[RMDB]
RNA sequence: GGGAACGACUCGAGUAGAGUCGAAAAACGGAUAGAUUCGUCUAUCCGUGCAUCUCAUAACAGACAGAGAAAGUCUGCUAAGAUCACACUUAGAUAAAGAGAAGAGAGUCGAGUUCGCUCGACUCAAGAACAAAGUCUAUUUCGAUAGACUUUGUUCAAAAGAAACAACAACAACAAC
Reactivity to 2A3 in 0.01 (KOAc 150mM, MgCl2 10mM, bicine 150mM(pH8.5), 24C), signal-to-noise 6, nucleotides 027 to 126: a000c000g000g000a000u010a000g030a010u040u040c190g030u010c110u010a000u000c000c000g000u010g000c010a090u010c000u000c010a040u080a130a050c010a010g020a010c010a000g210a000g160a300a160a010g030u000c000u000g000c000u010a020a010g010a060u150c040a020c010a010c090u020u030a010g020a060u160a180a150a030g120a020g040a130a040g120a020g000a000g020u000c000g000a010g000u040u070c190g050c060u000c000g000a000c000u010c010a000a010
Reactivity to DMS in 0.01 (KOAc 150mM, MgCl2 10mM, bicine 150mM(pH8.5), 24C), signal-to-noise 7, nucleotides 027 to 126: a020c000g000g000a010u000a000g000a030u000u010c180g010u000c000u000a010u000c000c000g010u000g000c170a110u000c000u000c010a100u010a100a200c020a010g010a010c010a050g000a220g010a120a150a070g000u000c000u000g000c030u000a020a020g000a060u000c170a110c190a100c030u000u000a020g000a160u010a050a080a090g000a110g000a090a110g010a170g000a010g010u000c000g000a010g010u000u010c180g000c020u000c000g010a010c000u000c000a010a060